[RMDB]
RNA sequence: GGGAACGACUCGAGUAGAGUCGAAAAGGAGAAACGAUGACGAACCCGAGAGGGCCUGAGGAAUCGCUUUUUAGAGUUUGACUGACAGAUUGUGUCAGUGUUUAGAGCCUGGCUAAACAACUCUUCAGAAACCUCAGGCGUCACUGAGCCAGGCUACCGAACUAGAAUGAUUCGUCAUUCUAGUUCGAAAAGAAACAACAACAACAAC
Reactivity to 2A3 in 0.01 (KOAc 150mM, MgCl2 10mM, bicine 150mM(pH8.5), 24C), signal-to-noise 3, nucleotides 027 to 156: g060g010a070g040a010a130a010c060g050a070u030g030a030c020g010a050a060c030c010c040g010a030g020a000g010g000g010c000c000u000g000a000g000g010a000a020u020c000g030c030u180u060u010u040u070a000g000a000g000u000u030u170g060a000c000u010g000a010c000a080g100a300u250u190g040u030g000u070c010a000g000u000g000u000u010u000a000g000a010g000c000c010u000g000g000c010u010a000a000a000c000a000a000c000u010c000u090u080c080a030g000a010a000a000c000c000u000c000a000g000g010c000g000u010c000a000c000u030g010a000g030c000c000a000g010g020c010u000a010c020
Reactivity to DMS in 0.01 (KOAc 150mM, MgCl2 10mM, bicine 150mM(pH8.5), 24C), signal-to-noise 3, nucleotides 027 to 156: g000g000a170g000a110a060a120c020g000a030u010g030a090c010g000a130a150c010c010c000g010a270g010a280g010g010g010c010c000u000g010a040g010g010a020a280u000c020g000c180u020u000u000u000u000a040g010a060g020u000u000u000g010a130c010u000g000a020c010a160g020a230u010u020g030u000g010u000c000a000g020u000g010u000u000u010a050g000a080g000c000c000u000g000g030c010u000a020a030a050c010a060a040c000u000c020u000u000c090a130g000a050a030a300c010c000u000c020a010g010g000c000g000u000c000a010c000u000g000a030g000c010c000a010g000g000c000u000a010c020

The record gives the reactivity of an RNA of 207 nucleotides to 2A3 and DMS. Reactivities are rounded to 0.1 and cut off at 0 and 3. It was measured as part of the RMDB library OK3TST. 2A3 adducts were read by reverse transcription with SuperScript II with manganese. The RNA was probed in 150 mM KOAc, 10 mM MgCl2 and 150 mM bicine (pH 8.5) at 24 C.